[RMDB]
RNA sequence: GGGAACGACUCGAGUAGAGUCGAAAAGACGUCGGGGCGUCCAAGAGUGCUACCCUGCUCGGUUUUUGCCCUACGAAACCUGAUGUCCGUCGCGCCGCUCUUGCCGCGCAGAUCUUCGUGGCCAACGGUCCACAUACUCUUUCGAGAGUAUGUGGACAAAAGAAACAACAACAACAAC
Reactivity to DMS in 0.01 (KOAc 150mM, MgCl2 10mM, bicine 150mM(pH8.5), 24C), signal-to-noise 3, nucleotides 027 to 126: g010a060c030g020u000c040g000g000g010g010c080g000u010c020c070a070a060g010a100g010u000g010c070u000a130c010c040c010u000g030c050u000c050g030g000u010u010u010u010u010g020c040c010c010u010a040c110g000a060a090a120c050c040u020g010a030u000g020u020c020c020g040u000c050g020c060g030c010c080g000c010u010c050u000u000g020c050c070g010c040g030c100a050g010a030u000c020u000u000c000g030u020g000g000c050c070a080a100c170g010
Reactivity to 2A3 in 0.01 (KOAc 150mM, MgCl2 10mM, bicine 150mM(pH8.5), 24C), signal-to-noise 8, nucleotides 027 to 126: g050a000c020g010u050c060g010g000g010g030c020g020u020c030c010a070a030g060a020g030u110g030c030u060a140c010c000c020u030g030c020u020c030g040g010u010u010u000u110u190g070c010c000c000u020a050c050g050a110a050a010c010c010u050g030a090u080g030u030c020c020g020u040c020g000c010g020c040c020g010c010u050c040u080u170g010c010c010g030c000g000c020a020g030a140u060c040u050u050c050g040u050g030g020c020c010a100a040c080g060